Structure probing data (2A3) for a 207-nucleotide construct. The data come from the RNA Mapping Database (RMDB), library OK3TST.
[RMDB]
RNA sequence: GGGAACGACUCGAGUAGAGUCGAAAAUGCAUCCUGGGGAUGAAGCCACCUUGAUUGUGGUAGAUAAGCAUUUUGAGGUGAUGCUGGAUUCAAUUUGCCAAUAUUUUAUUGAGAAUUUUUACACUGAUGUUCAUCAGGAAUAUUGGCCUGAAGUUUACCACUCGUAGCUAUUCGUAGCUACGAGUGGAAAAGAAACAACAACAACAAC
Reactivity to 2A3 in 0.01 (KOAc 150mM, MgCl2 10mM, bicine 150mM(pH8.5), 24C), signal-to-noise 1, nucleotides 027 to 156: u170g070c000a000u070c000c040u050g000g020g000g140a040u050g050a110a010g050c050c020a020c000c000u060u070g020a060u030u170g060u000g150g020u070a070g020a060u110a090a000g030c020a030u010u000u080u080g030a040g000g000u010g010a020u070g000c070u020g060g130a100u120u020c020a040a070u210u110u070g000c000c000a000a000u000a030u010u000u010u030a150u070u080g000a000g040a010a010u020u190u050u060u170a110c080a000c070u120g050a050u070g030u020u040c020a210u020c000a260g000g000a000a020u000a000u000u000g000g020c040c000u110g090a090a060g000u000u050u000a040

The reactions ran in a buffer of 150 mM KOAc, 10 mM MgCl2 and 150 mM bicine (pH 8.5), at 24 C. The 2A3 profile rests on 483 reads. 2A3 adducts were read by reverse transcription with SuperScript II with manganese. Reactivities are given for positions 27 through 156.